[RMDB]
RNA sequence: GGGAACGACUCGAGUAGAGUCGAAAACAGAGGCGCUCGCACGGGAUAGGAGUAAGACCAUAGCGAUAGGGAGAGAUGCUAGGAGUUAGAGGAGACCGAAGCGAGGAGGAAAGCAAAGAAAGCAACGACAGGAAAGUCUUCGGACUUUCCAAAAGAAACAACAACAACAAC
Reactivity to 2A3 in 0.01 (KOAc 150mM, MgCl2 10mM, bicine 150mM(pH8.5), 24C), signal-to-noise 6, nucleotides 027 to 129: c060a000g040a030g040g030c060g020c050u020c030g060c020a040c040g040g010g010a040u090a080g010g000a020g020u080a070a020g050a020c020c000a070u080a030g040c020g050a080u070a070g000g030g000a040g000a000g000a010u110g010c030u030a060g000g030a040g000u030u020a030g020a010g040g020a020g000a000c000c010g030a020a010g060c040g020a030g010g010a000g000g020a070a050a000g000c040a010a040a100g050a030a090a000g010c030a020a060c070g110a040c030a000
Reactivity to DMS in 0.01 (KOAc 150mM, MgCl2 10mM, bicine 150mM(pH8.5), 24C), signal-to-noise 6, nucleotides 027 to 129: c140a080g020a040g030g040c090g020c020u040c060g060c110a110c100g030g010g030a090u030a100g010g000a070g030u000a000a100g010a070c090c050a100u030a070g070c070g000a050u020a080g000g000g000a040g030a040g030a080u060g030c100u040a060g050g010a040g000u010u040a060g000a060g060g000a070g020a050c070c040g020a050a070g020c200g010a030g030g030a040g010g020a040a080a030g020c040a070a050a140g010a100a040a060g050c080a020a070c120g050a090c160a110
Structure probing data (2A3 and DMS) for a 170-nucleotide construct. DMS adducts were read by reverse transcription with MarathonRT. For 2A3 the reverse transcriptase was SuperScript II with manganese. The reactions ran in a buffer of 150 mM KOAc, 10 mM MgCl2 and 150 mM bicine (pH 8.5), at 24 C. It was measured as part of the RMDB library 15KLIB.